[RMDB]
Conditions: 150 mM KOAc, 10 mM MgCl2 and 150 mM bicine (pH 8.5), 24 C. Chemical mapping of a 177-nucleotide RNA with 2A3. The 2A3 profile rests on 800 reads.

RNA sequence: GGGAACGACUCGAGUAGAGUCGAAAAAGACUUUGUCUGGCCAGAAUUCGUCCAAGGCUCCUCAACCUCAGGCCAAGAAAGCUGGCCCUUCGAAACCCAAGUCGUCGUCGACGCCUUCGCAACGCAAAGCAUACCACUGCUUCGGCAGUGGUAUGCUAAAAGAAACAACAACAACAAC
Reactivity to 2A3 in 0.01 (KOAc 150mM, MgCl2 10mM, bicine 150mM(pH8.5), 24C), signal-to-noise 2, nucleotides 027 to 126: a000g060a040c020u180u020u200g010u020c020u000g010g010c030c010a000g040a030a050u090u010c010g090u100c020c050a030a080g030g000c000u040c070c040u300c050a050a170c000c010u150c170a110g010g000c000c000a000a030g000a020a100a000g060c030u000g000g000c000c050c010u030u050c010g070a140a090a010c000c000c000a040a030g060u070c020g000u000c010g010u000c020g000a010c000g060c000c000u020u040c010g000c070a010a010c000g000c020a020a070